[RMDB]
RNA sequence: GGGAACGACUCGAGUAGAGUCGAAAAGAAACUGGAACGAGCCAGAAACUCGAGGUACCGAAACAAAAGACGCAGGAACGGUGAGCUUGCGUCAAACUCGCCGAAAACAAAAAGGUACCGAAAGAAAGGGUAUCUCUAUCUUCGGAUAGAGAUACCCAAAAGAAACAACAACAACAAC
Reactivity to 2A3 in 0.01 (KOAc 150mM, MgCl2 10mM, bicine 150mM(pH8.5), 24C), signal-to-noise 2, nucleotides 027 to 126: g000a030a030a000c010u020g000g020a130a050c070g000a000g050c010c000a030g040a130a110a020c040u060c040g030a070g000g010u000a010c030c040g090a060a040a000c080a020a150a080a000g040a060c000g020c060a020g020g060a230a080c050g130g110u200g050a080g020c000u020u040g000c010g010u020c020a000a050a000c040u020c030g150c040c010g150a170a070a000a010c110a080a000a040a000a000g000g000u030a000c040c010g020a070a000a000g120a000a010a050
Reactivity to DMS in 0.01 (KOAc 150mM, MgCl2 10mM, bicine 150mM(pH8.5), 24C), signal-to-noise 1, nucleotides 027 to 126: g030a280a110a080c030u000g000g000a260a300c220g000a070g000c080c000a000g060a070a080a110c000u020c020g000a160g030g000u000a000c000c000g020a210a110a090c130a020a050a160a090g000a000c000g020c000a080g000g020a010a010c000g000g000u050g010a140g000c000u000u000g030c000g000u000c010a000a090a080c000u000c000g060c080c150g000a070a000a000a090c270a040a050a120a170a000g000g060u000a070c000c000g000a110a070a070g040a110a110a090
Structure probing data (2A3 and DMS) for a 177-nucleotide construct. The reactions ran in a buffer of 150 mM KOAc, 10 mM MgCl2 and 150 mM bicine (pH 8.5), at 24 C.